[RMDB]
RNA sequence: GGGAACGACUCGAGUAGAGUCGAAAAUUUAACCAACGAGCCAACUGUUGCUGAGCUCAUAAGUUAUGGAGUGAAAGAAGGAAGCUAUCUAGCUCUGGAAGAUCAAGAAAUAGACACAAGCACUUACAGUGUCAGAUACUGGAAAGUCCUGCAAUGCAAUUAACACAGACUUCGGUCUGUGUUAAUUAAAAGAAACAACAACAACAAC
Reactivity to 2A3 in 0.01 (KOAc 150mM, MgCl2 10mM, bicine 150mM(pH8.5), 24C), signal-to-noise 1, nucleotides 027 to 156: u110u080u010a020a080c030c010a000a030c090g030a000g020c000c020a050a010c040u130g070u110u040g010c040u040g060a110g040c000u010c020a080u100a080a000g060u090u060a040u150g020g030a050g030u050g020a090a030a050g040a010a030g010g000a030a050g070c010u040a090u050c010u060a000g030c020u000c020u040g030g000a010a010g010a040u050c040a010a010g060a070a120a060u160a040g040a000c010a000c010a050a110g060c020a000c080u030u110a050c060a030g010u020g020u030c010a020g000a080u060a080c010u040g040g000a090a000a000g060u000c010c020u000g040c020a020a040u060g050c040
Reactivity to DMS in 0.01 (KOAc 150mM, MgCl2 10mM, bicine 150mM(pH8.5), 24C), signal-to-noise 2, nucleotides 027 to 156: u010u000u000a070a300c050c010a090a130c150g000a040g000c010c020a070a150c050u000g010u020u010g050c020u010g000a150g000c060u000c010a060u010a060a060g000u000u000a060u000g030g000a100g020u000g010a030a070a080g010a070a080g000g000a050a100g000c020u000a070u010c010u000a070g000c030u000c020u030g000g000a090a090g000a080u000c000a070a100g000a060a070a100u010a140g020a070c050a040c020a030a090g030c070a040c040u000u000a050c010a090g000u000g020u030c040a120g010a140u000a040c030u000g010g000a070a050a070g000u000c050c020u010g000c040a090a110u000g030c110